Source information:
An RNA of 177 nucleotides, treated with 2A3 and DMS and read out base by base. The DMS profile rests on 13,869 reads. DMS adducts were read by reverse transcription with MarathonRT.
RNA sequence: GGGAACGACUCGAGUAGAGUCGAAAAGAUAUGGAUCACCAGGCUUUUGACGGAGACCACUCGGAAACGAGUGCGUCUCCGAUAAGCCUGUGUGAUCCUAAGUCAAAGGGUCGGUUCGCCGACCCAACAAGUAGGUACAGUUCGCUGUACCUACUUGAAAAGAAACAACAACAACAAC
Reactivity to 2A3 in 0.01 (KOAc 150mM, MgCl2 10mM, bicine 150mM(pH8.5), 24C), signal-to-noise 5, nucleotides 027 to 126: g020a010u060a020u160g000g000a000u000c000a010c000c010a000g000g030c030u150u210u240u300g300a230c120g000g000a000g000a010c010c010a000c000u010c010g010g020a040a050a080c010g010a000g010u000g000c020g000u010c000u020c010c000g000a000u000a000a000g000c000c000u000g000u000g010u010g010a000u000c000c000u000a000a000g000u000c020a030a100a170g000g000g010u000c020g000g060u050u080c220g050c120c000g000a000c000c000c000a000a000
Reactivity to DMS in 0.01 (KOAc 150mM, MgCl2 10mM, bicine 150mM(pH8.5), 24C), signal-to-noise 7, nucleotides 027 to 126: g010a040u000a300u010g000g010a010u000c000a010c010c000a020g000g010c000u000u000u010u010g020a260c180g020g000a020g000a010c000c010a000c000u000c000g010g010a090a090a200c010g010a020g020u000g000c250g010u000c010u000c000c000g010a000u000a010a010g010c000c000u000g000u010g020u000g000a010u000c000c000u000a000a070g010u000c040a110a150a150g000g010g020u000c000g000g010u010u010c270g030c000c000g010a010c010c000c000a000a030
The 2A3 profile rests on 16,226 reads. As a SHAPE reagent, 2A3 marks flexible, mostly unpaired nucleotides at the ribose 2'-OH.